[RMDB]
RNA sequence: GGGAACGACUCGAGUAGAGUCGAAAAUCGUACAGUCCGUUACGCCCGGGGGAAGAUCAUUGGGGGCAGUUCUGCGCGAAACUUUAUGAUCUAUCAACGACCAUCAAAAAGCUCACUAGAUCAAUGAUCGCUACCAUUUAUUCGUAAAUGGUAGCGAAAAAGAAACAACAACAACAAC
Reactivity to DMS in 0.01 (KOAc 150mM, MgCl2 10mM, bicine 150mM(pH8.5), 24C), signal-to-noise 2, nucleotides 027 to 126: u000c020g000u010a060c070a100g000u010c110c050g020u050u000a070c070g000c010c010c000g000g010g030g010g010a150a070g000a030u000c020a070u000u000g010g010g000g030g020c110a090g010u000u000c070u000g070c030g040c050g010a090a100a120c070u000u010u000a070u000g000a020u010c020u020a170u020c120a070a060c110g000a020c000c010a020u000c090a010a040a070a060a140g000c040u000c040a050c070u000a080g010a030u000c070a070a090u020g010a170
Reactivity to 2A3 in 0.01 (KOAc 150mM, MgCl2 10mM, bicine 150mM(pH8.5), 24C), signal-to-noise 2, nucleotides 027 to 126: u060c020g010u000a020c010a080g100u050c020c030g030u070u010a020c010g020c010c010c010g030g030g000g000g000a040a080g030a030u070c030a080u030u070g000g000g020g020g060c000a000g030u130u000c030u090g010c000g010c020g050a040a020a030c020u060u100u040a050u090g020a020u020c010u050a070u100c010a000a040c050g050a060c040c020a010u110c060a040a060a080a060a060g000c000u000c020a030c050u040a020g020a090u020c060a060a070u090g040a060